[RMDB]
RNA sequence: GGGAACGACUCGAGUAGAGUCGAAAAGCCACCCGCAGCGGCGUGACGGUGUCGAUGGCCGACGUGCUGGUGCCGCCGCGCAAGAAGGAGAUCCUCGACCACUACGAGGAGCGCGCGGACAAGGUCGGGACGUCCCUUAAUUCGUUAAGGGACGUCCAAAAGAAACAACAACAACAAC
Reactivity to 2A3 in 0.01 (KOAc 150mM, MgCl2 10mM, bicine 150mM(pH8.5), 24C), signal-to-noise 2, nucleotides 027 to 126: g030c000c020a000c000c000c000g050c000a030g040c020g090g000c050g020u050g050a040c000g050g030u050g010u150c090g150a140u200g130g000c000c000g050a020c020g040u080g010c020u090g010g140u060g030c010c010g030c040c020g000c000g020c020a070a000g050a030a060g120g050a060g020a020u010c020c010u030c020g070a140c040c100a150c160u190a080c040g000a000g010g020a020g000c040g010c000g000c020g020g000a020c030a000a040g120g050u060c070g060
Reactivity to DMS in 0.01 (KOAc 150mM, MgCl2 10mM, bicine 150mM(pH8.5), 24C), signal-to-noise 1, nucleotides 027 to 126: g000c090c070a080c010c000c020g000c040a010g020c010g000g020c000g010u000g020a090c000g050g010u000g020u020c160g000a090u000g010g000c020c000g010a070c090g020u000g020c000u010g000g000u000g020c000c070g000c000c000g000c000g060c040a080a130g000a170a120g010g010a070g000a190u010c010c000u000c030g000a180c080c110a070c220u000a040c010g020a000g000g000a010g000c060g050c000g010c010g000g000a060c150a090a020g020g000u000c090g000